[RMDB]
RNA sequence: GGGAACGACUCGAGUAGAGUCGAAAAGUAGCGAAAGCUACCCAGAGAAAUGGGUAUCGAGAUGAGAGAAAUGAAAAGGCUUGUCUCAUGCAUUGAGCACACUUUUCUGUGCUGUAUCGACGAUACAGGGUAUCGUUACGUUCGCGUAACGAUACCCAAAAGAAACAACAACAACAAC
Reactivity to 2A3 in 0.01 (KOAc 150mM, MgCl2 10mM, bicine 150mM(pH8.5), 24C), signal-to-noise 4, nucleotides 027 to 126: g020u020a000g000c000g050a100a100a000g000c000u030a030c000c010c040a100g040a000g100a100a170a070u220g030g060g000u020a020u020c050g010a030g000a020u030g000a030g000a000g010a030a090a040u160g010a050a030a040a000g020g080c070u060u070g050u090c000u020c000a020u100g170c030a100u040u160g020a000g010c040a010c000a020c000u070u000u000u010c010u000g080u090g030c000u010g060u100a010u010c040g200a230c040g000a070u010a010c020a020
Reactivity to DMS in 0.01 (KOAc 150mM, MgCl2 10mM, bicine 150mM(pH8.5), 24C), signal-to-noise 2, nucleotides 027 to 126: g030u000a010g020c000g000a190a050a040g010c000u000a000c000c020c010a260g010a280g030a060a020a120u070g030g000g000u010a030u000c050g010a220g000a040u000g000a060g000a070g000a030a070a030u090g000a080a000a030a010g000g000c130u000u000g010u010c000u000c000a030u060g060c170a070u030u000g000a080g000c000a020c140a040c010u000u000u010u000c020u000g000u060g000c020u000g020u020a020u000c020g020a130c040g000a020u000a010c070a170
Description
An RNA of 177 nucleotides, treated with 2A3 and DMS and read out base by base. The RNA was probed in 150 mM KOAc, 10 mM MgCl2 and 150 mM bicine (pH 8.5) at 24 C. It was measured as part of the RMDB library OK1LIB.